[RMDB]
This 177-nucleotide RNA was probed chemically with 2A3 and DMS. The RNA was probed in 150 mM KOAc, 10 mM MgCl2 and 150 mM bicine (pH 8.5) at 24 C. The data come from the RNA Mapping Database (RMDB), library M2PK50.
RNA sequence: GGGAACGACUCGAGUAGAGUCGAAAAGACAUGACGUUCGCGUCAUGUCAAAUAAAUAAAAGAUCGUAGCUAGCGACGAUCAAAACCUAGCAAAAAUAAAAAAAACCAUCUGGUUCGCCAGAUGGAACGAUACAGGUAUGUUCGCAUACCUGUAUCGAAAAGAAACAACAACAACAAC
Reactivity to 2A3 in 0.01 (KOAc 150mM, MgCl2 10mM, bicine 150mM(pH8.5), 24C), signal-to-noise 2, nucleotides 027 to 126: g000a000c000a000u000g010a000c020g000u020u080c220g020c000g100u010c000a000u000g000u000c000a000a000a000u000a010a010a010u130a010a060a020a030g060a030u020c010g010u010a010g020c030u030a020g040c060g120a030c000g020a020u090c060a030a030a010a030c000c010u020a000g070c030a000a040a070a110a060u260a090a080a040a030a000a010a010a050c000c000a000u000c000u000g000g070u060u050c230g010c020c010a010g000a000u000g000g000a000a000
Reactivity to DMS in 0.01 (KOAc 150mM, MgCl2 10mM, bicine 150mM(pH8.5), 24C), signal-to-noise 1, nucleotides 027 to 126: g000a010c010a000u010g040a020c000g020u000u020c190g000c030g060u010c000a000u020g010u000c000a010a050a020u000a070a040a110u000a030a140a210a190g010a030u000c000g010u000a100g020c100u000a070g000c050g020a010c010g010a000u000c020a030a040a120a190c010c000u000a040g060c110a020a050a060a100a050u100a030a030a020a090a070a110a130a090c000c000a000u000c000u000g000g000u010u000c220g040c000c000a010g000a000u000g000g010a020a020
For 2A3 the reverse transcriptase was SuperScript II with manganese.